The record gives the reactivity of an RNA of 177 nucleotides to DMS and 2A3.
[RMDB]
RNA sequence: GGGAACGACUCGAGUAGAGUCGAAAAGAUAUGGACCAGGAAUACAUCGAUCCACCCUUUCAACUACCCACCUUUCUCGGAAACGAGAAAGAGGUUGAAAGGGUGGGGAGUAUCAUGGUCCUAAGUCCACACAUGCCCUGUUCGCAGGGCAUGUGUGAAAAGAAACAACAACAACAAC
Reactivity to DMS in 0.01 (KOAc 150mM, MgCl2 10mM, bicine 150mM(pH8.5), 24C), signal-to-noise 1, nucleotides 027 to 126: g000a120u030a180u000g020g020a020c000c010a030g000g030a130a040u000a000c000a300u000c130g010a090u010c010c000a010c000c000c000u000u000u000c000a010a000c030u000a130c010c050c030a300c070c000u000u000u000c000u000c000g010g000a100a030a060c010g020a030g000a000a000a000g000a050g020g000u020u000g000a000a000a010g000g000g030u000g000g000g020g010a010g020u010a020u000c020a060u000g000g010u000c000c010u000a060a170g000u010c040
Reactivity to 2A3 in 0.01 (KOAc 150mM, MgCl2 10mM, bicine 150mM(pH8.5), 24C), signal-to-noise 1, nucleotides 027 to 126: g130a090u150a130u300g000g010a030c010c010a030g000g130a300a020u060a020c100a170u300c140g030a030u070c030c010a000c030c020c030u010u020u020c000a000a020c000u170a180c030c060c050a040c010c000u000u000u030c010u000c010g000g140a200a140a110c000g000a020g050a020a000a000g010a000g000g010u000u010g010a000a030a000g000g000g000u010g000g010g000g000a000g010u000a000u000c060a100u030g000g010u050c000c000u010a030a020g010u040c030

DMS adducts were read by reverse transcription with MarathonRT. The RNA was probed in 150 mM KOAc, 10 mM MgCl2 and 150 mM bicine (pH 8.5) at 24 C. For 2A3, 2,632 sequencing reads were counted.